[RMDB]
RNA sequence: GGGAACGACUCGAGUAGAGUCGAAAAGCGUCCUCGUUCGCGAGGACGCAAAAUAGCCAUUUGGAUCGAAGGCUUAACGAUCCGAAAAGUACAAAAGUACAAAAACCCCACUCUUCGGAGUGGGGAAUCUAAGAUCGAUGUUCGCAUCGAUCUUAGAAAAAGAAACAACAACAACAAC
Reactivity to DMS in 0.01 (KOAc 150mM, MgCl2 10mM, bicine 150mM(pH8.5), 24C), signal-to-noise 1, nucleotides 027 to 126: g000c000g000u000c000c000u000c000g080u000u020c260g060c000g020a010g000g020a000c010g010c020a000a010a030a050u000a220g010c020c000a100u000u010u010g000g000a000u020c020g010a100a230g000g020c070u000u020a140a080c050g000a020u000c000c000g000a020a050a090a070g000u000a020c020a120a050a040a220g010u000a030c050a060a090a090a060a140c000c000c000c000a010c000u010c000u000u020c150g020g010a030g010u010g030g000g010g000a000a000
Reactivity to 2A3 in 0.01 (KOAc 150mM, MgCl2 10mM, bicine 150mM(pH8.5), 24C), signal-to-noise 1, nucleotides 027 to 126: g000c010g010u000c000c040u010c020g000u000u080c160g000c000g000a000g000g010a010c010g000c000a000a000a000a000u020a010g030c000c000a090u030u060u190g000g000a000u010c000g030a170a060g170g000c040u060u050a080a060c010g000a000u010c000c000g000a050a000a000a030g020u000a010c070a040a300a040a040g010u000a020c070a000a070a130a230a250c010c000c000c000a000c000u030c000u020u100c300g090g000a010g000u010g030g030g000g030a000a030
Structure probing data (DMS and 2A3) for a 177-nucleotide construct. Conditions: 150 mM KOAc, 10 mM MgCl2 and 150 mM bicine (pH 8.5), 24 C. Values are in units of 0.01, from 0 to 300, in steps of 10. Reactivities are given for positions 27 through 126.